[RMDB]
RNA sequence: GGGAACGACUCGAGUAGAGUCGAAAAGAUAUGGACAAGAACUACGCUGAAAUUAGCGUUGAAAUCGGAAACGAUGGAGCUAUGAGUAAGCGCUUGUCCUAAGUCAAAAGCGGAGUUCGCUCCGCAAGUGAACUAGUAGCUUCGGCUACUAGUUCACAAAAGAAACAACAACAACAAC
Reactivity to 2A3 in 0.01 (KOAc 150mM, MgCl2 10mM, bicine 150mM(pH8.5), 24C), signal-to-noise 1, nucleotides 027 to 126: g010a000u050a020u160g000g000a020c010a010a030g020a090a100c140u200a020c300g000c010u010g010a010a070a090u040u000a000g000c040g130u140u070g030a040a030a020u000c000g020g060a070a060a010c020g020a020u020g020g030a030g020c010u010a010u050g010a000g020u000a000a040g000c010g010c010u000u000g000u000c000c000u000a090a010g050u030c040a000a080a080a000g000c000g000g000a010g010u120u130c180g020c130u000c020c010g010c010a010a000
Reactivity to DMS in 0.01 (KOAc 150mM, MgCl2 10mM, bicine 150mM(pH8.5), 24C), signal-to-noise 1, nucleotides 027 to 126: g020a060u040a300u000g000g020a060c000a000a000g000a140a040c160u030a230c000g000c010u000g000a060a120a270u000u000a010g010c000g040u000u000g000a060a110a040u000c050g030g000a030a040a210c030g000a000u000g000g020a110g000c000u000a100u000g000a050g020u000a110a050g000c020g050c000u020u000g000u000c000c000u000a020a120g030u010c060a060a000a140a140g000c000g020g000a050g020u000u000c300g000c000u000c000c000g050c000a030a030

Background: An RNA of 177 nucleotides, treated with 2A3 and DMS and read out base by base. For DMS, 764 sequencing reads were counted. Reactivities are rounded to 0.1 and cut off at 0 and 3. The RNA was probed in 150 mM KOAc, 10 mM MgCl2 and 150 mM bicine (pH 8.5) at 24 C.